[RMDB]
Structure probing data (2A3) for a 207-nucleotide construct. 2A3 adducts were read by reverse transcription with SuperScript II with manganese. The reactions ran in a buffer of 150 mM KOAc, 10 mM MgCl2 and 150 mM bicine (pH 8.5), at 24 C.
RNA sequence: GGGAACGACUCGAGUAGAGUCGAAAAACAACUUCGCUCUAGCUGCAUAAGCUAAGCGGUCUCUCCUCUCCAUCGCCCAUGUGGAGUGGCUGAGACUCAACUUUAGUGGGAUACGCCUUUCUCCCCCCGCCUGAGGGAGAAGGAAGAGACUAAUCAGGUUCCGUAUACUGUUCGCAGUAUACGGAACAAAAGAAACAACAACAACAAC
Reactivity to 2A3 in 0.01 (KOAc 150mM, MgCl2 10mM, bicine 150mM(pH8.5), 24C), signal-to-noise 4, nucleotides 027 to 156: a000c060a040a070c050u130u080c020g010c000u080c070u040a010g000c010u050g030c060a130u100a300a010g000c000u000a000a010g000c010g000g000u010c000u010c010u000c000c000u020c000u020c000c000a000u000c010g040c000c000c000a000u000g000u000g000g000a000g000u010g010g000c080u020g000a010g040a010c040u090c100a100a300c090u210u300u290a000g010u000g000g000g000a000u020a010c000g000c000c000u060u280u120c000u050c000c020c000c000c000c010g030c010c000u000g000a010g000g000g000a000g000a000a000g000g000a000a000g010a000g010a020c130u190a090a030u040c000a010g020